Structure probing data (2A3 and DMS) for a 207-nucleotide construct.
DMS (dimethyl sulfate) methylates the pairing face of unpaired adenines and cytosines.
2A3 adducts were read by reverse transcription with SuperScript II with manganese.
RNA sequence: GGGAACGACUCGAGUAGAGUCGAAAAGGACAUUUCGAUGUCCGGCGAACCUUUGUGACGAUUCAAGAGCGAUAAGCUACCCUCGACCCAUUGGGUCGAUGGUAGCUUUUGACGCUCGAAGAUCGUCACUCUGGUGGAGUUUGCCGUUCGCGGCAAAUGACAGUUUAACUUUCGAGUUAAACUGUCAAAAAGAAACAACAACAACAAC
Reactivity to 2A3 in 0.01 (KOAc 150mM, MgCl2 10mM, bicine 150mM(pH8.5), 24C), signal-to-noise 4, nucleotides 027 to 156: g000g000a010c010a010u130u160u190c300g120a030u020g000u000c020c000g000g010c040g100a030a020c010c000u000u000u000g000u000g000a000c010g020a010u120u050c130a190a070g000a000g010c000g010a010u010a040a000g000c000u000a010c010c000c000u000c020g010a010c000c040c170a300u180u300g000g000g000u020c000g000a000u000g000g000u000a000g010c010u000u000u000u010g010a000c000g000c000u000c010g000a000a000g010a000u000c000g000u000c000a000c000u000c000u000g000g000u070g030g010a160g040u030u060u060g000c000c010g010u030u070c300g000c000g070g000c000a020a000a030
Reactivity to DMS in 0.01 (KOAc 150mM, MgCl2 10mM, bicine 150mM(pH8.5), 24C), signal-to-noise 3, nucleotides 027 to 156: g010g010a010c000a030u010u000u000c190g030a040u000g010u000c000c000g000g010c020g020a080a070c010c010u020u000u010g020u000g000a030c010g000a020u010u000c010a030a300g000a030g020c010g010a190u000a030a020g020c010u000a010c000c000c050u010c000g020a030c000c000c010a300u000u010g080g030g020u000c000g010a000u000g010g020u000a010g010c000u000u000u000u000g020a250c050g020c010u000c000g000a190a120g000a010u000c000g020u000c010a000c010u010c030u000g010g000u010g000g010a090g020u000u000u000g000c030c000g020u000u010c200g020c030g020g000c010a000a010a040